Structure probing data (DMS and 2A3) for a 177-nucleotide construct. Reactivities are given for positions 27 through 126. The DMS profile rests on 808 reads. DMS adducts were read by reverse transcription with MarathonRT. 2A3 adducts were read by reverse transcription with SuperScript II with manganese. The 2A3 profile rests on 1,747 reads. The RNA was probed in 150 mM KOAc, 10 mM MgCl2 and 150 mM bicine (pH 8.5) at 24 C.
[RMDB]
RNA sequence: GGGAACGACUCGAGUAGAGUCGAAAACGCGUGCCGUCAAGGCGUGCAUCAACCGUCUUGUAGCCCGGGGCGAAGUCGAGCGCGAGCGGCAAGCCGGCGGCACCCGCAACAUGCCCGACUACAGCCGCCAUGCUCAUGCUUUCGAGCAUGAGCAUGGAAAAGAAACAACAACAACAAC
Reactivity to DMS in 0.01 (KOAc 150mM, MgCl2 10mM, bicine 150mM(pH8.5), 24C), signal-to-noise 1, nucleotides 027 to 126: c070g040c220g020u000g000c000c000g070u000c100a060a080g010g000c000g040u030g000c120a130u000c240a100a130c170c040g040u000c010u030u000g030u010a090g010c030c020c000g000g000g000g040c000g010a100a130g000u010c080g000a040g000c010g070c040g000a300g020c010g000g000c000a040a090g070c030c040g010g010c060g000g010c050a110c140c040c000g030c040a040a120c220a090u010g030c000c000c020g030a050c130u010a120c200a150g000c050c000g020
Reactivity to 2A3 in 0.01 (KOAc 150mM, MgCl2 10mM, bicine 150mM(pH8.5), 24C), signal-to-noise 1, nucleotides 027 to 126: c030g000c030g000u030g000c060c020g050u100c070a080a080g030g000c030g040u060g060c000a210u150c040a000a060c010c000g110u110c050u020u050g020u050a090g040c070c020c020g020g000g080g000c120g030a050a010g110u050c010g020a000g020c020g000c030g020a000g030c030g030g010c050a100a060g000c010c000g040g040c000g000g040c000a030c000c000c000g000c020a070a130c020a090u080g020c030c030c000g000a020c100u220a060c060a070g020c020c040g000